[RMDB]
RNA sequence: GGGAACGACUCGAGUAGAGUCGAAAACUAUGUGCCCUUAUUCAAGGGACUGACCAUGGCAGAUGAUCUCACAUCUGUGAUCAAGAAGAUGAUGGACAGUUCAUCAGGUCAGGGGCUUGAUGAUUACGACGAAGGAGGAAUUCGUUCCUCCUUCGUCAAAAGAAACAACAACAACAAC
Reactivity to DMS in 0.01 (KOAc 150mM, MgCl2 10mM, bicine 150mM(pH8.5), 24C), signal-to-noise 3, nucleotides 027 to 126: c140u020a120u010g030u010g010c000c000c010u010u000a110u010u010c070a000a040g020g000g010a130c020u000g000a020c010c020a080u000g020g000c040a040g020a030u000g010a140u010c140u030c200a110c020a040u000c040u000g010u000g010a090u000c100a130a080g010a140a100g000a050u000g000a040u010g000g010a150c190a060g010u000u000c000a020u000c020a080g010g010u000c030a070g000g010g020g000c030u000u000g000a020u000g010a150u000u000a080c250
Reactivity to 2A3 in 0.01 (KOAc 150mM, MgCl2 10mM, bicine 150mM(pH8.5), 24C), signal-to-noise 4, nucleotides 027 to 126: c070u060a100u250g130u130g130c000c000c000u010u140a140u080u090c040a020a030g020g040g070a010c000u010g000a000c000c000a070u090g140g000c030a030g000a020u020g010a090u070c070u050c130a100c010a080u000c000u020g030u040g020a100u110c080a020a090g090a110a040g010a140u070g010a010u040g020g130a040c060a070g040u050u010c010a020u010c040a020g000g030u020c020a000g020g000g010g030c010u020u020g010a000u010g020a030u060u300a100c130

This 177-nucleotide RNA was probed chemically with DMS and 2A3. The data come from the RNA Mapping Database (RMDB), library OK2TRN. For DMS the reverse transcriptase was MarathonRT. Conditions: 150 mM KOAc, 10 mM MgCl2 and 150 mM bicine (pH 8.5), 24 C.